[RMDB]
RNA sequence: GGGAACGACUCGAGUAGAGUCGAAAACUACGGGCUUCAAGCUGGCGACAGUGCUGAGGAUGCAGUCACAACGAUAAUCAGCGACUUACUGUCUGUCACUUUUAAAAUUGUGGAUGAAGACGCAUCACCUGGAAACACGAUUCGUCGUGUUUCCAGGAAAAGAAACAACAACAACAAC
Reactivity to DMS in 0.01 (KOAc 150mM, MgCl2 10mM, bicine 150mM(pH8.5), 24C), signal-to-noise 2, nucleotides 027 to 126: c050u000a150c080g000g000g000c010u010u010c100a040a220g000c200u000g000g010c000g000a020c020a030g030u000g000c020u000g000a080g030g000a160u030g000c060a110g000u000c130a080c270a050a100c040g000a060u000a100a110u010c050a000g000c000g010a130c200u000u000a030c080u000g000u000c000u010g020u000c010a020c010u040u000u040u000a050a030a150a100u000u020g010u000g000g030a040u000g000a060a020g000a030c070g010c000a040u000c120a110
Reactivity to 2A3 in 0.01 (KOAc 150mM, MgCl2 10mM, bicine 150mM(pH8.5), 24C), signal-to-noise 2, nucleotides 027 to 126: c040u110a110c030g080g030g020c000u030u020c050a000a020g020c100u000g050g020c000g000a020c000a010g040u040g080c000u010g000a020g080g060a120u200g060c100a040g150u120c060a020c060a270a050c100g050a030u070a050a090u060c020a000g010c000g080a060c050u070u220a030c000u040g020u020c040u040g000u010c010a010c020u070u070u060u200a090a200a110a110u170u210g040u080g110g000a050u100g060a100a000g030a020c060g000c050a080u060c040a040
An RNA of 177 nucleotides, treated with DMS and 2A3 and read out base by base. It was measured as part of the RMDB library OK2TRN. The DMS profile rests on 987 reads. DMS adducts were read by reverse transcription with MarathonRT. The RNA was probed in 150 mM KOAc, 10 mM MgCl2 and 150 mM bicine (pH 8.5) at 24 C.